The record gives the reactivity of an RNA of 177 nucleotides to DMS.
The RNA was probed in 150 mM KOAc, 10 mM MgCl2 and 150 mM bicine (pH 8.5) at 24 C.

RNA sequence: GGGAACGACUCGAGUAGAGUCGAAAAGGCUUACCUGGGAACUCAGAGUAUUGUUCACCGGCUGUGUUGGGUUAGACGACAGGUAGGCAAAACCUGUCACGAAAAUAAUCAGUGAAGCAGCGAUUGCACAUGUGCCAAGGUUCGCCUUGGCACAUGUAAAAGAAACAACAACAACAAC
Reactivity to DMS in 0.01 (KOAc 150mM, MgCl2 10mM, bicine 150mM(pH8.5), 24C), signal-to-noise 2, nucleotides 027 to 126: g000g010c080u010u000a070c060c070u000g000g010g010a150a090c000u000c000a060g000a080g020u020a060u000u000g010u000u010c010a130c020c000g020g010c030u000g000u000g020u000u010g000g010g030u010u000a060g000a220c100g000a010c010a020g000g000u010a010g030g050c230a100a050a120a030c010c000u000g000u010c000a110c100g010a110a100a080a090u010a050a030u000c010a080g000u010g000a080a130g000c030a020g000c100g030a120u000u010g020c150
For DMS the reverse transcriptase was MarathonRT. It was measured as part of the RMDB library OK2TRN.